[RMDB]
RNA sequence: GGGAACGACUCGAGUAGAGUCGAAAAUCCACGUCCUUCGGGACGUGGAAAAUACGGCACGGGAGGCGAAGAAAUCCCGAAGCGCAGUGCAGCGCAGCACAAAAAGGUGAGUCUUCGGACUCACCAACAUAGCGUCCAUGUUCGCAUGGACGCUAUGAAAAGAAACAACAACAACAAC
Reactivity to DMS in 0.01 (KOAc 150mM, MgCl2 10mM, bicine 150mM(pH8.5), 24C), signal-to-noise 2, nucleotides 027 to 126: u000c000c000a000c010g000u000c000c000u010u020c170g050g000g010a010c000g040u000g000g000a000a000a030a080u020a160c100g020g060c020a140c000g030g010g020a090g010g010c020g000a110a090g020a060a110a090u010c020c020c000g000a070a050g020c030g020c010a070g000u030g020c160a130g010c000g030c070a100g000c070a060c090a030a090a080a060a120g010g020u000g000a020g010u000c000u000u010c230g050g000a000c000u000c000a000c000c000a030a020
Reactivity to 2A3 in 0.01 (KOAc 150mM, MgCl2 10mM, bicine 150mM(pH8.5), 24C), signal-to-noise 1, nucleotides 027 to 126: u020c000c010a020c030g020u000c010c000u050u090c170g130g010g000a000c000g000u000g000g010a000a010a010a000u060a010c010g010g020c050a000c020g060g030g020a030g030g030c070g050a130a090g070a090a270a030u040c010c030c000g020a060a010g040c060g000c050a030g030u050g070c040a050g040c020g000c010a040g030c000a050c030a070a090a000a020a010g000g000u010g000a000g000u000c000u010u080c170g030g000a000c000u000c000a000c000c000a000a010
An RNA of 177 nucleotides, treated with DMS and 2A3 and read out base by base. Conditions: 150 mM KOAc, 10 mM MgCl2 and 150 mM bicine (pH 8.5), 24 C. For 2A3 the reverse transcriptase was SuperScript II with manganese. The 2A3 profile rests on 1,583 reads. High DMS reactivity at an A or C suggests that its Watson-Crick edge is free.